RNA sequence: GGGAACGACUCGAGUAGAGUCGAAAAUCCUAAGUCGUGGGAACUAACCGGUAAUACAGAGCUUGUCAGGUAGGUCGGAAACGACCUACCUUGGAUUUAGCUCUGUGCCAGGUUAGGGAACACGAUAUGGAAAAACGUGAGCGGUUCGCCGCUCACGACUUACACAGAGGUUCGCCUCUGUGUAAGUAAAAGAAACAACAACAACAAC
Reactivity to 2A3 in 0.01 (KOAc 150mM, MgCl2 10mM, bicine 150mM(pH8.5), 24C), signal-to-noise 1, nucleotides 027 to 156: u030c010c000u030a140a020g020u000c000g000u010g010g000g000a020a080c000u000a000a000c000c010g020g000u080a110a060u140a180c020a010g000a000g000c000u010u010g010u020c010a000g000g000u010a000g000g010u000c000g010g010a110a050a050c010g000a000c000c000u000a000c040c010u010u040g010g000a000u150u110u180a000g000c000u000c000u000g000u000g000c000c010a140g000g010u000u000a000g000g000g000a000a000c010a000c000g000a000u000a030u010g020g020a040a110a040a010a000c020g010u010g000a000g020c000g040g000u060u140c300g040c070c020g000c000u000c000a000c000g000
Reactivity to DMS in 0.01 (KOAc 150mM, MgCl2 10mM, bicine 150mM(pH8.5), 24C), signal-to-noise 2, nucleotides 027 to 156: u000c000c010u000a040a220g040u000c000g030u000g000g000g010a300a300c010u000a000a000c010c020g010g030u000a100a190u000a170c010a010g000a020g020c000u000u010g010u000c010a030g010g020u000a000g010g030u010c000g000g000a140a090a300c000g010a000c010c000u010a000c000c000u000u000g000g020a040u000u000u000a050g040c000u000c000u020g000u000g030c020c040a130g100g020u000u000a020g020g000g000a300a300c020a020c000g010a010u000a130u000g000g010a030a050a060a110a080c000g010u010g000a020g060c000g010g000u000u000c240g010c000c000g010c010u000c000a000c000g010